[RMDB]
RNA sequence: GGGAACGACUCGAGUAGAGUCGAAAAGUCGCUGCCGAUGUGGAAGGGCGCCGCGCCGCCAUGUUCGCGGGCGAGCAUAUCAACAAUACCGAAGACCGCGCCGUUCUGCAUGUGGCGCUGCGCGACAAUUAUAUGGGGACUUCGGUCCCCAUAUAAUAAAAGAAACAACAACAACAAC
Reactivity to 2A3 in 0.01 (KOAc 150mM, MgCl2 10mM, bicine 150mM(pH8.5), 24C), signal-to-noise 2, nucleotides 027 to 126: g030u050c020g010c080u070g000c160c020g060a020u040g020u050g020g000a050a010g060g020g000c010g000c000c010g000c020g100c010c040g000c000c050a240u280g090u220u180c060g000c020g100g000g000c010g010a080g020c010a060u080a000u180c030a000a110c010a060a230u130a280c000c060g020a010a010g040a010c010c040g030c000g010c020c010g160u010u040c000u020g010c010a010u030g090u130g210g000c000g000c040u050g090c080g000c010g030a000c010a000
Reactivity to DMS in 0.01 (KOAc 150mM, MgCl2 10mM, bicine 150mM(pH8.5), 24C), signal-to-noise 4, nucleotides 027 to 126: g020u000c000g020c000u020g010c010c020g010a020u000g010u010g000g000a020a020g000g000g020c020g030c010c110g020c020g010c020c000g020c020c080a110u020g020u020u000c160g020c070g000g000g010c000g000a110g040c090a090u000a080u000c080a080a150c150a070a120u010a110c140c080g010a050a110g000a100c150c170g000c010g010c010c000g000u000u000c020u000g010c030a020u000g010u010g010g000c000g020c140u000g020c170g010c010g010a020c040a110